[RMDB]
Notes:
Structure probing data (DMS and 2A3) for a 177-nucleotide construct. It was measured as part of the RMDB library OK2TRN. For 2A3 the reverse transcriptase was SuperScript II with manganese.

RNA sequence: GGGAACGACUCGAGUAGAGUCGAAAAGGUAGCAGAGAAGAGACUAGCCUUCAGACUAGAUAGUAUCACACUACGGGUACAUAGUAGAGACAUACAUAGAUGAGUAUGACACAUCAGAGCUGCCAUGACCAUGAGGUACCUUCGGGUACCUCAUGGUAAAAGAAACAACAACAACAAC
Reactivity to DMS in 0.01 (KOAc 150mM, MgCl2 10mM, bicine 150mM(pH8.5), 24C), signal-to-noise 2, nucleotides 027 to 126: g040g030u010a020g030c020a150g000a160g000a020a170g020a150g000a040c030u000a060g000c010c030u010u040c180a220g010a120c030u000a060g010a090u000a050g000u000a120u000c110a130c100a080c050u000a010c140g030g000g020u000a050c040a050u010a090g000u000a020g000a140g020a060c080a040u000a050c080a050u000a080g000a080u000g030a120g000u000a010u000g010a080c050a060c050a090u010c100a030g010a170g020c010u000g030c000c020a090u010g000
Reactivity to 2A3 in 0.01 (KOAc 150mM, MgCl2 10mM, bicine 150mM(pH8.5), 24C), signal-to-noise 1, nucleotides 027 to 126: g010g010u010a020g020c070a030g040a010g000a230a040g090a020g040a060c020u000a000g100c020c000u020u130c060a020g020a120c010u040a000g040a090u000a040g070u040a040u060c040a040c040a050c160u170a070c140g030g000g000u010a020c040a070u070a040g050u040a030g020a020g030a070c020a030u060a000c020a010u150a050g160a250u120g030a060g030u020a040u040g030a020c040a010c020a100u090c070a000g030a030g130c010u030g000c010c040a010u060g030